An RNA of 177 nucleotides, treated with 2A3 and DMS and read out base by base. It was measured as part of the RMDB library OK2TST. The RNA was probed in 150 mM KOAc, 10 mM MgCl2 and 150 mM bicine (pH 8.5) at 24 C.
RNA sequence: GGGAACGACUCGAGUAGAGUCGAAAAUGCAGCAAAAUGGGGCGUUGUUGCAAAACGCUUUAACCGAAAACAACAUCGCUGAGAUCGUGAGCCAAUGGACGCACAUCCCGGUACAAAAAAUGCUCCACUAGGAGUAUCGGUUCGCCGAUACUCCUAGAAAAGAAACAACAACAACAAC
Reactivity to 2A3 in 0.01 (KOAc 150mM, MgCl2 10mM, bicine 150mM(pH8.5), 24C), signal-to-noise 1, nucleotides 027 to 126: u030g000c000a000g000c000a000a000a000a160u050g000g020g030g000c020g000u010u020g000u040u010g050c000a090a000a030a050c080g000c000u080u090u160a070a030c000c050g050a010a020a060a100c050a010a030c020a090u150c090g000c100u050g010a020g010a050u030c100g050u010g040a010g040c000c010a010a110u140g070g010a040c040g040c040a050c010a020u040c000c000c000g000g050u120a090c070a000a170a000a060a000a010u090g000c000u020c020c010a030
Reactivity to DMS in 0.01 (KOAc 150mM, MgCl2 10mM, bicine 150mM(pH8.5), 24C), signal-to-noise 1, nucleotides 027 to 126: u000g010c000a030g040c010a010a030a070a060u010g000g000g000g010c050g000u000u000g000u000u000g050c030a050a090a080a070c180g000c110u010u040u000a140a160c080c040g020a050a020a070a100c090a080a040c050a070u000c110g000c010u040g010a040g000a050u000c120g020u000g020a030g010c000c010a040a120u010g000g010a080c030g000c040a010c010a050u000c010c010c000g000g000u000a040c220a000a020a040a040a040a050u000g000c000u000c000c000a160